An RNA of 177 nucleotides, treated with DMS and read out base by base.
The DMS profile rests on 1,487 reads.
The RNA was probed in 150 mM KOAc, 10 mM MgCl2 and 150 mM bicine (pH 8.5) at 24 C.
RNA sequence: GGGAACGACUCGAGUAGAGUCGAAAAAGACAAAGCUAGUUUGUGGUCACAAUUGCACUAUGUUUCAUGUAACAAUUUGGAAAUGCAAGAAGCUUAUCUUGUUAACUUGGUUAAUGUGUUGCGUGAGAUGCAGAUGUACCUUCGGGUACAUCUGCAUAAAAGAAACAACAACAACAAC
Reactivity to DMS in 0.01 (KOAc 150mM, MgCl2 10mM, bicine 150mM(pH8.5), 24C), signal-to-noise 1, nucleotides 027 to 126: a080g000a040c080a040a040a100g000c060u000a060g020u000u010u010g030u010g030g000u000c100a090c070a040a080u010u000g010c060a070c070u000a070u000g020u010u000u000c060a020u010g000u000a050a020c010a060a050u000u010u010g030g000a030a090a040u010g010c010a010a010g000a040a130g010c140u000u000a090u010c020u010u000g020u010u010a020a100c120u000u010g020g000u000u000a040a070u000g020u010g010u010u000g000c020g030u020g010a050g020